[RMDB]
RNA sequence: GGGAACGACUCGAGUAGAGUCGAAAAGCCGUAGGCGACCUUGCGGUAGAUCCGCCCGUCGCGCCCCUGGCGCUGGAAGCGCAGCGGCGCGUAUUCGAGGAACGCCUGGCGUGCACGGGCCGCCAGACCUCCUAAUGAGUUUCGACUCAUUAGGAGGAAAAGAAACAACAACAACAAC
Reactivity to DMS in 0.01 (KOAc 150mM, MgCl2 10mM, bicine 150mM(pH8.5), 24C), signal-to-noise 7, nucleotides 027 to 126: g010c010c010g030u010a050g000g010c110g010a110c070c020u000u000g010c040g000g010u000a080g010a130u010c040c070g010c020c110c050g000u000c020g010c010g000c000c010c140c050u010g030g020c000g010c020u000g010g010a120a130g010c010g020c000a070g010c300g000g000c010g010c010g010u010a030u000u000c050g000a080g000g000a090a130c070g010c030c010u000g010g010c040g020u000g010c070a100c140g020g000g000c040c030g000c010c020a100g010a240
Reactivity to 2A3 in 0.01 (KOAc 150mM, MgCl2 10mM, bicine 150mM(pH8.5), 24C), signal-to-noise 7, nucleotides 027 to 126: g040c000c010g030u060a050g010g080c060g040a100c030c020u020u070g010c000g000g040u060a070g030a230u070c030c020g020c020c020c010g050u030c010g000c000g000c000c010c000c040u120g190g020c010g000c050u090g190g180a210a050g000c010g000c020a020g040c030g100g000c020g000c010g020u020a250u030u120c060g080a080g060g070a210a140c010g010c030c000u010g010g020c010g010u030g000c030a020c060g030g080g010c020c010g000c000c000a020g010a090
Annotation: An RNA of 177 nucleotides, treated with DMS and 2A3 and read out base by base. For 2A3 the reverse transcriptase was SuperScript II with manganese. It was measured as part of the RMDB library OK2TST. The 2A3 profile rests on 14,213 reads. 2A3 is a SHAPE reagent: it acylates the 2'-hydroxyl of flexible nucleotides of all four kinds.